[RMDB]
RNA sequence: GGGAACGACUCGAGUAGAGUCGAAAACGCCAAUCAGCUGAAGCAUAUACCGAUUCAGGUUGUAAGGAGCUGCUUUCAAUCCCUCCCACUAAAAGGUUGCUUGCCAUACCUGCCUUGAUUUUAGCAUAACCCACGGAAAGAGCUGCACCAGCUGAUAUCAAAAUGCAUACUUCGGUAUGCAUUUUGAAAAAGAAACAACAACAACAAC
Reactivity to DMS in 0.01 (KOAc 150mM, MgCl2 10mM, bicine 150mM(pH8.5), 24C), signal-to-noise 4, nucleotides 027 to 156: c060g000c040c020a150a100u000c010a040g030c030u010g020a140a090g030c060a140u000a120u000a080c030c020g000a200u010u000c080a130g020g020u000u000g010u010a100a170g030g010a110g020c050u000g010c040u000u000u000c040a080a130u000c010c020c010u000c010c010c000a160c110u020a050a050a060a100g010g010u000u000g010c020u000u020g010c040c090a120u000a090c030c020u010g010c030c030u000u000g000a130u020u000u000u000a080g010c050a080u010a060a090c030c010c020a120c080g000g010a040a040a110g010a090g020c030u000g020c030a160c040c000a030g020c000u000g030a050u000a150
Reactivity to 2A3 in 0.01 (KOAc 150mM, MgCl2 10mM, bicine 150mM(pH8.5), 24C), signal-to-noise 4, nucleotides 027 to 156: c050g020c010c010a010a030u020c000a000g010c000u020g030a090a020g020c040a010u110a000u040a180c040c030g110a110u140u180c130a100g040g020u070u060g040u130a100a120g050g060a030g040c010u080g080c030u060u050u100c060a090a220u120c030c000c020u020c000c030c010a030c040u070a040a060a030a030g040g000u010u040g020c020u080u080g020c010c000a050u060a060c010c020u020g040c000c020u070u060g040a100u100u100u050u080a020g000c010a010u030a080a030c000c010c030a030c040g030g010a010a100a000g040a010g000c050u070g000c020a060c040c000a020g000c000u000g000a000u000a000